[RMDB]
RNA sequence: GGGAACGACUCGAGUAGAGUCGAAAAUCUCAGGUCUUCGGACCUGAGAAAAAUAAAAUAAGCUAAUCGUCAAAGCACAACACUGUAGAUAAAGACGACAAAAAAGGACAAUCUUCGGAUUGUCCAACUAUGCUUAACGGUUCGCCGUUAAGCAUAGAAAAGAAACAACAACAACAAC
Reactivity to DMS in 0.01 (KOAc 150mM, MgCl2 10mM, bicine 150mM(pH8.5), 24C), signal-to-noise 2, nucleotides 027 to 126: u000c000u010c020a000g000g000u000c000u000u010c210g060g010a000c000c000u010g000a020g000a020a000a030a140a030u010a040a060a050a110u020a150a090g000c070u010a080a140u010c010g000u000c020a140a120a090g000c050a070c190a090a070c150a120c130u000g000u000a040g040a110u000a090a080a150g020a030c020g000a080c300a010a040a060a040a050a060g010g000a010c010a010a000u000c000u000u000c160g000g000a010u000u010g030u000c000c000a010a000
Reactivity to 2A3 in 0.01 (KOAc 150mM, MgCl2 10mM, bicine 150mM(pH8.5), 24C), signal-to-noise 3, nucleotides 027 to 126: u000c010u010c010a010g000g000u000c010u030u090c180g070g000a000c000c010u000g000a000g000a010a010a000a010a000u040a000a020a000a030u160a100a010g030c050u070a120a070u040c010g030u020c010a070a090a070g020c010a020c020a150a110c100a110c140u130g030u140a030g020a110u040a100a050a020g030a010c010g010a000c050a000a100a020a000a000a000g010g000a000c000a000a010u000c010u040u140c220g030g000a010u000u010g000u020c000c000a000a010